[RMDB]
RNA sequence: GGGAACGACUCGAGUAGAGUCGAAAACUCUUCCUGGAGGGAGGCGUCCAGAUGCUGCUGGCUCUGGUGGGCAUUGGGGCGACGCUGGUGCUGGCAGGAGCGCAGCCGAUGGCGGCGUGGAUAGCACGCGUACAGUCAGUUUCGACUGACUGUACGCAAAAGAAACAACAACAACAAC
Reactivity to 2A3 in 0.01 (KOAc 150mM, MgCl2 10mM, bicine 150mM(pH8.5), 24C), signal-to-noise 1, nucleotides 027 to 126: c000u010c000u060u030c040c030u030g030g040a110g050g010g040a030g030g000c050g040u000c030c000a030g020a100u130g020c010u020g000c000u040g040g040c010u010c040u100g070g000u080g050g010g000c040a060u070u170g000g050g000g070c050g020a060c020g000c010u020g020g010u020g000c000u020g040g000c000a020g000g060a050g020c070g000c030a020g000c000c010g140a110u250g070g030c030g030g020c000g000u040g000g010a060u080a080g060c030a040c120
Reactivity to DMS in 0.01 (KOAc 150mM, MgCl2 10mM, bicine 150mM(pH8.5), 24C), signal-to-noise 2, nucleotides 027 to 126: c070u010c070u010u010c030c010u000g030g000a080g010g010g010a090g010g000c020g010u000c010c060a150g020a080u010g010c030u000g000c060u000g000g000c070u010c010u000g020g000u010g010g000g020c090a080u000u000g020g000g000g030c100g000a080c040g030c020u000g030g020u000g000c020u000g000g000c050a060g000g010a140g040c040g020c020a020g010c000c020g000a120u010g020g020c040g010g010c020g010u000g000g000a120u010a060g030c080a080c150